[RMDB]
RNA sequence: GGGAACGACUCGAGUAGAGUCGAAAAUUCGCCACCUGUCGCCGGCGUCUCGCGAGGGGGCGCGGCGACUGGCCGCCGAGGCCGAGCUCGCGCUGUCCGGACGCACCUGGGCGCCCGGCGUGGAGGCCGGGUAUACGGUGUUCGCACCGUAUACCCGAAAAGAAACAACAACAACAAC
Reactivity to 2A3 in 0.01 (KOAc 150mM, MgCl2 10mM, bicine 150mM(pH8.5), 24C), signal-to-noise 3, nucleotides 027 to 126: u060u020c030g060c020c000a050c010c020u140g130u300c000g000c000c000g140g000c000g010u000c040u040c060g050c050g100a170g000g060g000g000g000c000g000c020g000g000c030g010a020c000u000g010g000c000c030g080c050c140g190a080g000g040c000c000g030a000g030c090u200c040g020c020g010c010u070g210u120c000c000g020g050a040c060g000c010a070c030c090u250g000g030g040c000g050c040c040c020g000g020c010g000u050g020g050a010g000g030c000
Reactivity to DMS in 0.01 (KOAc 150mM, MgCl2 10mM, bicine 150mM(pH8.5), 24C), signal-to-noise 1, nucleotides 027 to 126: u000u040c020g000c030c000a210c000c090u010g000u010c000g010c000c000g000g060c000g010u000c010u010c130g010c140g060a220g030g000g040g000g000c000g000c000g010g090c000g000a000c000u010g030g020c060c030g000c210c260g000a190g000g000c020c020g010a180g000c000u100c020g050c060g020c030u000g020u040c000c030g040g000a050c080g000c290a180c150c170u060g000g040g000c060g120c120c040c000g000g000c040g000u030g000g010a070g000g060c080